[RMDB]
RNA sequence: GGGAACGACUCGAGUAGAGUCGAAAAGGCUGGCAUCUGACGGCGCUCGCCGCGAAGGGUGCGAGAAAAACAGGUGAGCUGGUCGAAGGUUGCCUGGUCGGGGGCGAAACCUGAGAUGACGAUUGUACUCGACCUAAGCCUGUAGACGCUUCGUGUGACCUUAGACAAGGUUCGCCUUGUCUAAGGUAAAAGAAACAACAACAACAAC
Reactivity to 2A3 in 0.01 (KOAc 150mM, MgCl2 10mM, bicine 150mM(pH8.5), 24C), signal-to-noise 4, nucleotides 027 to 156: g070g010c020u030g020g000c010a040u000c050u070g090a060c030g030g040c050g010c080u100c090g030c030c020g020c060g080a100a070g050g030g000u050g000c070g020a070g020a010a100a010a020a000c030a000g020g010u060g020a040g040c070u060g040g000u010c020g000a020a000g020g000u050u050g010c000c010u010g040g000u020c010g010g010g000g000g000c070g070a080a020a020c010c000u050g020a060g000a080u180g030a020c080g040a040u080u170g040u070a060c020u010c000g000a010c000c000u000a010a000g010c010c000u020g010u040a040g010a070c060g020c090u070u050c080g080u040g060u060g110
Reactivity to DMS in 0.01 (KOAc 150mM, MgCl2 10mM, bicine 150mM(pH8.5), 24C), signal-to-noise 2, nucleotides 027 to 156: g020g030c000u000g020g000c010a020u000c010u000g020a220c000g000g000c030g000c130u000c080g000c000c000g020c060g010a110a120g020g020g020u000g040c050g000a120g000a030a040a070a070a090c070a110g020g050u000g000a140g020c050u000g000g050u000c030g020a120a180g020g010u000u000g020c010c030u000g020g020u000c030g000g010g000g000g010c080g000a060a050a170c010c020u030g010a180g000a180u030g030a120c050g010a120u000u010g020u020a050c040u000c010g010a060c000c010u010a100a300g010c000c000u000g020u000a080g020a110c130g010c000u020u010c030g050u000g020u010g020

An RNA of 207 nucleotides, treated with 2A3 and DMS and read out base by base. Values cover nucleotides 27 to 156. The RNA was probed in 150 mM KOAc, 10 mM MgCl2 and 150 mM bicine (pH 8.5) at 24 C. For 2A3, 2,733 sequencing reads were counted.